[RMDB]
This 177-nucleotide RNA was probed chemically with 2A3 and DMS. Values are in units of 0.01, from 0 to 300, in steps of 10. The data come from the RNA Mapping Database (RMDB), library OK1LIB. For 2A3 the reverse transcriptase was SuperScript II with manganese.
RNA sequence: GGGAACGACUCGAGUAGAGUCGAAAAUCGGUGACCGUAACGUUCCAAAUACUUCUUUCCAUUUGUGCUGACGAAUGGUGAAAUACUGCCACUACUGCACGGGCCGAGAUAGGAGCGCCGCGACGCACGGUAUAGGCUGGUUCGCCAGCCUAUACCGAAAAGAAACAACAACAACAAC
Reactivity to 2A3 in 0.01 (KOAc 150mM, MgCl2 10mM, bicine 150mM(pH8.5), 24C), signal-to-noise 6, nucleotides 027 to 126: u100c010g000g000u050g070a090c010c030g020u040a050a050c050g020u030u010c010c000a030a080a060u240a100c040u060u080c020u100u110u030c010c010a030u020u060u100g090u050g050c130u140g100a080c010g030a060a030u030g000g010u050g030a040a060a020u170a090c080u080g030c010c000a060c060u120a060c020u080g040c040a000c000g010g000g000c010c030g060a080g010a050u100a060g090g100a070g010c020g020c030c010g040c020g020a070c030g020c040a020
Reactivity to DMS in 0.01 (KOAc 150mM, MgCl2 10mM, bicine 150mM(pH8.5), 24C), signal-to-noise 2, nucleotides 027 to 126: u040c020g020g020u000g000a070c040c020g070u020a080a130c110g020u000u000c010c020a040a100a080u030a060c140u020u020c090u020u000u000c020c000a040u000u000u000g030u010g000c150u020g000a060c110g020a020a030u000g000g000u010g000a030a060a050u080a040c090u030g000c000c100a100c010u040a080c040u000g040c100a020c000g010g000g000c050c030g050a050g000a060u010a090g000g050a130g000c020g020c030c020g000c080g010a090c070g000c040a160
For 2A3, 4,233 sequencing reads were counted. For DMS the reverse transcriptase was MarathonRT. The DMS profile rests on 2,982 reads.